An RNA of 207 nucleotides, treated with 2A3 and read out base by base. The data come from the RNA Mapping Database (RMDB), library RNAMAK. For 2A3, 883 sequencing reads were counted. The RNA was probed in 150 mM KOAc, 10 mM MgCl2 and 150 mM bicine (pH 8.5) at 24 C.
RNA sequence: GGGAACGACUCGAGUAGAGUCGAAAAGAUAUGGAUCCUGAACUACGCUUGAGGGAACCAACAGCUUGACUCGGAAACGAGUCAAGACAUGGUUCCCAAGAUGAGGCGCAGGAUCCUAAGUCAAAGAAGUUUUUACUGUUCGCAGUAAAAACUUCAACCAAAGAUCCUUCUUCGGAAGGAUCUUUGGAAAAGAAACAACAACAACAAC
Reactivity to 2A3 in 0.01 (KOAc 150mM, MgCl2 10mM, bicine 150mM(pH8.5), 24C), signal-to-noise 1, nucleotides 027 to 156: g000a000u050a010u050g010g000a000u000c010c020u030g040a210a140c130u170a020c130g000c030u060u090g190a150g010g010g010a000a000c010c000a000a060c030a060g020c000u010u000g000a000c010u000c000g000g000a020a030a030c000g000a020g010u000c000a000a010g010a000c000a110u100g000g000u000u000c010c000c000a000a000g000a010u190g200a020g000g040c030g010c010a000g000g000a000u000c000c000u010a010a000g030u000c030a000a200a080g000a000a000g000u030u000u000u000u000a000c000u010g040u110u140c300g000c110a000g010u010a000a000a000a000a000c000u030u000c010a000a000